[RMDB]
RNA sequence: GGGAACGACUCGAGUAGAGUCGAAAACGGGUGCUUCGCGAGAUCGAAAUACUGCAAAACCUUCAGUUCUGCGAGCAGGUAGUAGGCUGCCGCCUCUUCUUCCGACCCAAGAGCGAGGAGAAAGACGCCAUCAGGUACCGUUCGCGGUACCUGAUGGAAAAGAAACAACAACAACAAC
Reactivity to DMS in 0.01 (KOAc 150mM, MgCl2 10mM, bicine 150mM(pH8.5), 24C), signal-to-noise 1, nucleotides 027 to 126: c130g000g050g020u000g000c060u000u010c010g060c040g000a080g010a100u010c050g000a070a110a040u040a040c170u050g000c060a010a030a050a120c200c010u000u000c090a070g000u000u000c000u000g000c000g020a120g000c080a130g000g000u000a010g040u000a100g000g020c030u000g010c030c080g000c010c020u060c010u020u000c000u000u010c040c010g020a190c070c000c030a010a090g020a040g050c140g000a130g020g000a030g020a080a000a050g020a120c160g000
Reactivity to 2A3 in 0.01 (KOAc 150mM, MgCl2 10mM, bicine 150mM(pH8.5), 24C), signal-to-noise 4, nucleotides 027 to 126: c000g030g000g030u060g030c000u050u130c060g000c050g090a020g020a070u040c020g070a020a010a050u200a110c080u060g090c100a070a070a090a150c040c000u100u090c030a060g040u040u020c010u060g050c030g010a020g020c020a030g030g000u020a030g000u030a030g070g050c020u020g010c020c020g020c040c000u010c010u060u010c000u040u000c010c040g060a140c010c000c030a040a010g000a040g110c060g010a040g000g020a030g100a000a120a000g070a010c080g010
An RNA of 177 nucleotides, treated with DMS and 2A3 and read out base by base.
For DMS the reverse transcriptase was MarathonRT.
For 2A3 the reverse transcriptase was SuperScript II with manganese.